[RMDB]
RNA sequence: GGGAACGACUCGAGUAGAGUCGAAAAGAUCAAUUAUGAUUGCAAUGUAAUAUGUCAAGGCAGACAUAUCUAGCUGUCGCCUUAGCUAGAGAUCGCCGAUUUAUUGCUUUCAUAAGACCGGCCAGAACACGUAGUGAUAUUUCGAUAUCACUACGUGAAAAGAAACAACAACAACAAC
Reactivity to DMS in 0.01 (KOAc 150mM, MgCl2 10mM, bicine 150mM(pH8.5), 24C), signal-to-noise 9, nucleotides 027 to 126: g010a080u010c060a100a210u000u000a010u000g000a010u000u000g010c010a010a010u000g000u010a040a050u000a070u010g020u010c200a100a120g010g010c020a090g020a040c300a090u010a300u000c010u000a010g010c000u000g010u010c190g000c220c140u010u010a010g000c000u000a010g000a030g000a080u000c080g000c010c010g000a050u000u000u000a020u000u000g000c010u000u000u000c000a010u000a010a040g010a070c050c030g010g000c030c040a140g010a100a200
Reactivity to 2A3 in 0.01 (KOAc 150mM, MgCl2 10mM, bicine 150mM(pH8.5), 24C), signal-to-noise 9, nucleotides 027 to 126: g040a090u150c070a030a120u040u010a010u020g010a010u000u020g000c000a000a010u040g050u230a060a060u100a080u240g220u150c080a070a100g030g000c070a050g030a070c040a050u170a060u020c010u000a000g020c010u020g120u190c080g170c040c050u080u080a000g000c000u000a000g000a010g000a090u050c040g010c030c010g010a000u030u040u020a010u010u020g000c000u010u010u000c000a010u000a020a010g040a030c020c020g020g060c030c030a070g030a120a010